[RMDB]
RNA sequence: GGGAACGACUCGAGUAGAGUCGAAAAAGAGGGCAGCGCAGGUACGGGUACCGGUGCUGCGCAGACCGAGCACGUGAGGGAGCUGGAGGCGACAAAUGGGGCUCUGAAGGCCCAGCUGCAGGUGCUGUACAGAAUUUAAAUUCGUUUAAAUUCUGUAAAAAGAAACAACAACAACAAC
Reactivity to DMS in 0.01 (KOAc 150mM, MgCl2 10mM, bicine 150mM(pH8.5), 24C), signal-to-noise 7, nucleotides 027 to 126: a120g000a120g010g000g010c000a040g010c020g020c010a030g010g020u000a030c080g030g010g030u000a030c020c010g010g030u000g000c010u000g000c020g010c030a060g000a230c040c020g000a070g010c040a050c070g010u000g010a110g010g000g000a090g020c050u000g010g010a130g010g010c040g010a080c090a030a060a120u000g020g010g010g010c020u010c060u010g010a110a180g000g000c020c000c010a050g010c050u000g000c040a050g010g010u000g010c040u000g000
Reactivity to 2A3 in 0.01 (KOAc 150mM, MgCl2 10mM, bicine 150mM(pH8.5), 24C), signal-to-noise 3, nucleotides 027 to 126: a000g100a060g020g070g000c010a020g000c020g000c010a010g040g000u080a040c140g220g100g110u020a020c010c020g020g000u020g000c010u010g000c020g010c000a000g010a020c000c020g020a030g010c030a020c070g090u070g040a090g000g090g010a040g000c010u020g070g000a070g030g070c030g020a030c050a020a140a060u140g040g000g010g000c030u040c050u100g090a080a030g030g000c020c000c010a010g020c010u030g000c010a020g000g080u040g020c030u020g000